[RMDB]
RNA sequence: GGGAACGACUCGAGUAGAGUCGAAAAAAUUAGAGGCAAUUUGAAAUAAUUUAAAUUAGCUCAACCCAACUGCACUUACCGAACUAGAUAACGGUGUAGUAGGGGUAAAUUCUCCGCAUUCGGUGCGCAACCACCUGAGGUUUCGACCUCAGGUGAACUAUGGAGUUACGUUCGCGUAACUCCAUAGAAAAGAAACAACAACAACAAC
Reactivity to 2A3 in 0.01 (KOAc 150mM, MgCl2 10mM, bicine 150mM(pH8.5), 24C), signal-to-noise 1, nucleotides 027 to 156: a000a000u160u040a030g000a030g010g060c030a000a000u000u000u120g080a180a170a070u300a070a300u140u070u130a050a020a060u070u060a040g000c040u030c090a000a020c000c000c000a000a010c000u000g000c040a010c020u020u080a040c000c020g060a130a050c040u060a060g090a140u180a300a070c100g040g000u020g000u010a000g000u000a020g010g070g030g000u020a050a000a000u050u000c020u030c010c020g010c020a010u050u070c030g080g000u070g000c020g000c010a000a200c010c010a000c000c000u000g030a000g000g010u030u000u200c220g170a050c000c000u000c000a000g000g000u000g000a000a000
The record gives the reactivity of an RNA of 207 nucleotides to 2A3. Conditions: 150 mM KOAc, 10 mM MgCl2 and 150 mM bicine (pH 8.5), 24 C. The data come from the RNA Mapping Database (RMDB), library M2RFPK. 2A3 adducts were read by reverse transcription with SuperScript II with manganese.